Structure probing data (2A3) for a 207-nucleotide construct. 2A3 is a SHAPE reagent: it acylates the 2'-hydroxyl of flexible nucleotides of all four kinds. Values cover nucleotides 27 to 156.

RNA sequence: GGGAACGACUCGAGUAGAGUCGAAAAUGGAUACAAGAGCAUCUUCUAGAAAACCCUGAAACAGCUGUUGCUCACACUUCUGAAGCAGGUUGGAAGUAUAUGCAUGUAUCCUCAGGGAGACACAUGCACAUCAAAUGCUUCACGUCCUACAGUCGCGCAAUCGUCCCUGAUUCGUCAGGGACGAUUGAAAAGAAACAACAACAACAAC
Reactivity to 2A3 in 0.01 (KOAc 150mM, MgCl2 10mM, bicine 150mM(pH8.5), 24C), signal-to-noise 1, nucleotides 027 to 156: u090g010g060a000u010a020c010a000a040g010a000g030c040a080u040c000u030u010c010u030a030g040a110a260a090a120c070c010c000u010g130a070a030a030c040a060g030c050u060g000u050u030g000c030u050c090a010c020a050c020u070u060c030u070g030a020a010g100c020a030g110g070u110u080g070g010a070a070g040u150a080u020a030u150g000c000a000u010g020u010a040u040c020c000u010c040a040g100g020g000a030g000a000c030a000c000a040u010g020c030a020c000a100u180c030a010a210a000u030g000c000u030u020c040a030c120g010u010c000c030u010a080c010a110g000u070c100g020c000g010